[RMDB]
RNA sequence: GGGAACGACUCGAGUAGAGUCGAAAAGUCUAGCGAAAGGAUCCCACCCGGGAAACACGCAAGUCGCGAAUUAAGCCGACCGGCCAAGGUCAAUUGCAGAACUCAACUGCAUGAGUAAGCUAGACGAGCCUAUUAAAUAUUUCGAUAUUUAAUAGGCAAAAGAAACAACAACAACAAC
Reactivity to 2A3 in 0.01 (KOAc 150mM, MgCl2 10mM, bicine 150mM(pH8.5), 24C), signal-to-noise 6, nucleotides 027 to 126: g000u000c000u010a000g000c010g070a170a040a020g130g010a040u000c010c010c000a020c010c000c000g000g010g030a060a100a010c060a020c030g010c040a100a060g260u210c080g000c020g050a110a180u230u100a240a000g030c050c030g070a040c000c010g010g000c020c010a030a010g020g000u020c010a020a070u060u010g000c000a010g030a210a110c070u060c260a050a140c020u010g000c000a010u010g000a000g070u040a030a030g000c000u000a000g000a000c000g000a010
Reactivity to DMS in 0.01 (KOAc 150mM, MgCl2 10mM, bicine 150mM(pH8.5), 24C), signal-to-noise 7, nucleotides 027 to 126: g000u000c010u000a000g020c000g000a100a170a160g020g010a050u000c000c010c010a150c300c020c040g000g020g020a150a110a070c060a120c040g000c050a090a130g010u010c160g000c030g000a130a100u000u010a070a140g020c040c060g010a240c010c060g000g000c030c030a140a140g000g000u000c010a060a120u010u000g010c010a010g000a050a080c150u010c220a060a080c010u000g000c000a010u000g000a200g010u010a060a150g000c010u000a010g000a020c010g000a140